The data come from the RNA Mapping Database (RMDB), library OK1LIB. An RNA of 177 nucleotides, treated with 2A3 and DMS and read out base by base. The reactions ran in a buffer of 150 mM KOAc, 10 mM MgCl2 and 150 mM bicine (pH 8.5), at 24 C. For DMS the reverse transcriptase was MarathonRT. Reactivities are rounded to 0.1 and cut off at 0 and 3. For 2A3, 2,461 sequencing reads were counted.

[RMDB]
RNA sequence: GGGAACGACUCGAGUAGAGUCGAAAAGACGUAGAUCAUCGUCGUGCGGAUAUCCUGAUGCAGCUUGCUGAUCUCCGUACGCAUCUGAACCCGGAGCGAGGCGUCGAGAUUGGACAGCGGUUCGUCGCCGUCAAAAUAGCUUCGGCUAUUUUGACGGAAAAGAAACAACAACAACAAC
Reactivity to 2A3 in 0.01 (KOAc 150mM, MgCl2 10mM, bicine 150mM(pH8.5), 24C), signal-to-noise 5, nucleotides 027 to 126: g050a010c040g030u100a020g010a220u080c030a080u120c040g060u020c010g030u070g010c030g020g000a050u050a050u130c020c050u190g040a080u190g020c030a050g050c070u150u270g000c010u060g010a050u020c000u000c010c010g010u010a040c000g000c040a130u020c020u040g100a160a120c000c030c000g050g000a040g010c030g020a030g050g030c010g010u040c030g010a000g000a070u080u170g050g000a020c020a020g050c060g100g000u030u060c030g010u030c040g030
Reactivity to DMS in 0.01 (KOAc 150mM, MgCl2 10mM, bicine 150mM(pH8.5), 24C), signal-to-noise 3, nucleotides 027 to 126: g000a060c050g000u020a050g010a100u020c150a060u010c070g020u030c010g020u020g030c030g000g000a060u010a040u000c010c140u060g010a070u020g030c020a120g010c100u010u020g040c060u030g000a030u000c040u000c000c020g000u000a020c010g010c080a070u030c040u000g000a060a160c100c020c000g000g000a020g030c040g000a120g000g000c010g000u010c010g010a030g010a130u020u020g010g000a120c130a030g000c060g020g020u010u020c030g040u000c050g000